RNA sequence: GGGAACGACUCGAGUAGAGUCGAAAAUGGCAGCGCGAACGUGUCGCGAUCGUUGGCUAAAUACCGAUUGUGAUUUAUCGACCAGCAGAUGUGAUUAGGAGAGCAAGUGCACUUUCAAGAUAGAGUGCCGCUGAUCAUAUUUCGAUAUGAUCAGCGGAAAAGAAACAACAACAACAAC
Reactivity to DMS in 0.01 (KOAc 150mM, MgCl2 10mM, bicine 150mM(pH8.5), 24C), signal-to-noise 3, nucleotides 027 to 126: u020g000g030c030a050g030c120g030c030g000a070a190c070g000u010g000u000c000g030c110g050a010u000c090g040u000u010g000g020c010u030a070a060a110u020a110c100c030g000a030u020u000g000u010g000a060u010u010u000a040u020c080g020a110c030c050a050g020c070a070g000a070u010g050u070g000a090u030u060a060g000g010a080g040a090g000c080a080a140g000u030g030c000a000c010u010u000u000c080a050a040g000a150u010a080g010a010g000u020g000
Reactivity to 2A3 in 0.01 (KOAc 150mM, MgCl2 10mM, bicine 150mM(pH8.5), 24C), signal-to-noise 5, nucleotides 027 to 126: u130g040g000c030a030g000c040g010c010g060a180a000c090g040u050g040u050c000g020c000g050a030u000c000g030u030u110g090g000c050u030a050a100a040u200a120c040c030g050a110u050u060g040u070g090a040u060u100u080a150u070c090g110a110c010c000a020g000c030a020g050a070u030g110u050g080a160u060u100a080g040g050a050g000a010g070c040a060a040g080u050g070c000a000c020u030u130u090c090a080a040g030a070u140a020g050a070g030u030g000